[RMDB]
RNA sequence: GGGAACGACUCGAGUAGAGUCGAAAAGAUUACGUGUCGUUGUGGAAUCGAUACUACGCACGAGAUUCCAAGGUCUCUGUAGUACGUCCGCUGGUGACGUCUUUGGAGUGACGUUCGAUAUACGAAAGGUAUCUAGUACGUUCGCGUACUAGAUACCAAAAGAAACAACAACAACAAC
Reactivity to 2A3 in 0.01 (KOAc 150mM, MgCl2 10mM, bicine 150mM(pH8.5), 24C), signal-to-noise 4, nucleotides 027 to 126: g030a040u150u150a050c040g010u040g030u040c010g050u050u130g010u020g020g080a040a010u140c030g020a040u000a040c000u010a000c010g010c010a010c170g020a000g000a020u100u030c210c050a090a090g080g000u000c000u000c000u010g000u010a000g000u010a000c000g010u030c000c000g000c030u040g120g070u090g020a000c000g000u000c010u040u090u120g100g020a130g050u080g020a030c020g010u030u010c030g040a040u010a030u010a150c050g040a110a010a000
Reactivity to DMS in 0.01 (KOAc 150mM, MgCl2 10mM, bicine 150mM(pH8.5), 24C), signal-to-noise 4, nucleotides 027 to 126: g000a100u040u040a060c090g010u010g020u010c040g010u010u000g000u010g000g010a040a050u040c070g010a060u000a010c050u000a010c020g000c220a030c170g010a080g010a030u000u010c100c180a080a100g000g000u000c000u010c000u020g000u000a040g000u020a010c010g000u000c000c030g020c090u020g010g010u020g030a020c010g000u000c010u020u010u030g010g020a080g010u020g000a020c020g000u000u010c000g010a080u000a070u010a060c080g000a050a120a130
Record summary
The record gives the reactivity of an RNA of 177 nucleotides to 2A3 and DMS. The RNA was probed in 150 mM KOAc, 10 mM MgCl2 and 150 mM bicine (pH 8.5) at 24 C. The DMS profile rests on 8,213 reads.